[RMDB]
RNA sequence: GGGAACGACUCGAGUAGAGUCGAAAAGGGUGAGACCUAGGAACCUUAGGGGUAUUCUCAAAGGAAGCUUUUGCAGUGACGCCCAUGUAAGUGGGAUAUAACAACAGAACUCGUAUGAGUAGCCUAAUAAAUCGGACCUUCUUCGGAAGGUCCGAAACGCAAACUAUCAGUUCGCUGAUAGUUUGCGAAAAGAAACAACAACAACAAC
Reactivity to 2A3 in 0.01 (KOAc 150mM, MgCl2 10mM, bicine 150mM(pH8.5), 24C), signal-to-noise 1, nucleotides 027 to 156: g030g060g000u070g020a120g050a150c050c030u090a090g000g120a070a100c020c040u020u050a030g000g030g000g000u020a040u180u030c000u020c080a050a020a020g080g000a090a040g050c050u060u110u100u070g050c100a040g000u050g030a030c120g030c000c000c000a010u010g060u110a040a180g020u030g000g010g000a000u040a000u050a210a010c030a040a040c030a010g070a000a050c010u050c080g040u160a020u190g010a020g050u010a050g080c000c010u070a140a060u120a160a130a070u070c030g000g000a000c000c000u000u040c000u040u040c080g140g000a000a000g000g010u000c000c020g000a000a000a000
This 207-nucleotide RNA was probed chemically with 2A3.
Reactivities are given for positions 27 through 156.